[RMDB]
RNA sequence: GGGAACGACUCGAGUAGAGUCGAAAAUGUCGCCCACACGCACGUUCCAUCGCACAUUUGGGCCCUCAACUGACCGACAUUUACGCCCGUACGUGGAAGGCGUAUAAAAUGCUGGCGAGAGGCAGUGGAACUAGGAGUGGUUCGCCACUCCUAGUUCAAAAGAAACAACAACAACAAC
Reactivity to 2A3 in 0.01 (KOAc 150mM, MgCl2 10mM, bicine 150mM(pH8.5), 24C), signal-to-noise 3, nucleotides 027 to 126: u090g060u050c040g030c010c020c000a010c020a010c020g110c000a050c070g030u050u000c020c010a090u080c090g010c070a030c020a110u070u100u150g030g020g020c000c020c000u080c020a120a100c050u060g070a230c020c020g030a040c030a040u040u030u030a010c000g000c000c010c000g070u160a130c080g050u100g070g080a100a060g040g030c020g010u010a010u030a030a120a010a020u100g000c040u030g040g050c040g000a060g030a010g030g040c010a030g040u110g120
Reactivity to DMS in 0.01 (KOAc 150mM, MgCl2 10mM, bicine 150mM(pH8.5), 24C), signal-to-noise 3, nucleotides 027 to 126: u010g000u000c070g010c060c030c030a120c100a070c070g010c050a130c070g000u000u000c030c040a080u000c070g020c070a040c080a160u000u010u010g010g000g010c010c020c030u010c040a090a090c110u010g000a100c060c030g020a040c070a060u010u000u000a030c070g000c010c000c020g010u010a110c130g040u010g010g010a130a110g000g010c010g000u000a040u010a080a050a050a060u010g010c050u000g000g020c020g010a070g000a120g000g010c040a060g040u010g000